[RMDB]
RNA sequence: GGGAACGACUCGAGUAGAGUCGAAAAUGAGCAUUAAGUAAGAGUACUUAACCCUCUUUUUGCAGCCAUGCAGGUUGGGGACUAUCAUUAUAAUCAGUGUCGAUUAUAAUGUUCAACAUUGAUUAGCCCAUACGCCCCUUUUCGAAGGGGCGUAUGGAAAAGAAACAACAACAACAAC
Reactivity to 2A3 in 0.01 (KOAc 150mM, MgCl2 10mM, bicine 150mM(pH8.5), 24C), signal-to-noise 1, nucleotides 027 to 126: u080g010a010g030c050a030u020u040a020a030g010u030a090a140g060a080g300u030a050c030u000u000a010a010c030c000c000u040c000u010u080u000u050u100g050c000a000g060c000c060a030u090g000c030a000g030g000u010u020g000g030g010g020a000c030u040a040u200c010a010u000u110a020u010a040a010u020c000a010g110u010g140u210c020g000a000u000u030a030u030a180a030u100g020u000u020c020a050a090c030a050u050u080g020a090u220u040a060g070c000
Reactivity to DMS in 0.01 (KOAc 150mM, MgCl2 10mM, bicine 150mM(pH8.5), 24C), signal-to-noise 2, nucleotides 027 to 126: u000g020a060g030c230a220u000u000a000a040g010u000a010a150g010a290g010u000a040c030u000u000a030a070c110c210c010u000c000u020u000u030u000u000g020c020a030g020c050c180a090u010g000c050a060g010g010u000u000g010g000g040g000a170c160u010a050u000c060a000u020u000a020u000a010a010u000c000a070g000u010g020u000c080g000a010u010u010a060u010a030a070u000g020u000u000c070a020a020c060a050u010u000g000a040u010u000a040g010c140